[RMDB]
RNA sequence: GGGAACGACUCGAGUAGAGUCGAAAACCUAUCCAAAAUGAGAUCCCAUCUUGCACACUGUGCUAAUUUGAGAUUCUCAUGCCUCCUACUUGGAGAGAUCUGGACUAGAAGUUAGGGCAUCUGACUCAAUACAUUCGUCAGUUCGCUGACGAAUGAACGUAAACAAUAAGUUCGCUUAUUGUUUACGAAAAGAAACAACAACAACAAC
Reactivity to 2A3 in 0.01 (KOAc 150mM, MgCl2 10mM, bicine 150mM(pH8.5), 24C), signal-to-noise 9, nucleotides 027 to 156: c000c000u010a060u040c030c020a040a040a030a080u010g000a010g000a010u000c020c000c000a010u000c020u010u030g010c010a020c040a090c180u300g010u010g020c050u170a060a070u010u020u000g030a030g000a020u300u080c000u000c000a010u030g020c000c000u020c000c010u130a290c140u150u250g020g000a010g000a010g010a050u040c070u100g010g020a030c030u060a060g050a160a030g120u050u070a030g030g030g110c080a120u070c090u040g030a040c010u010c060a050a080u090a150c000a010u000u000c000g000u000c010a010g010u010u070c240g000c060u000g000a000c000g000a000a000u000g000a020a000
Reactivity to DMS in 0.01 (KOAc 150mM, MgCl2 10mM, bicine 150mM(pH8.5), 24C), signal-to-noise 4, nucleotides 027 to 156: c010c010u010a100u000c020c040a040a050a130a090u000g010a020g000a060u000c000c000c010a050u000c090u000u000g010c020a030c020a220c190u020g010u010g010c000u010a020a050u000u000u000g000a030g000a030u000u000c010u000c010a040u000g000c050c010u000c020c000u000a130c190u010u010g010g010a020g010a100g030a100u000c060u000g000g000a110c120u010a110g010a080a080g010u000u010a040g010g010g000c100a090u000c020u000g010a090c020u000c020a090a080u000a150c010a020u000u000c010g000u000c000a010g020u010u010c300g020c000u000g020a010c000g010a010a000u000g010a050a180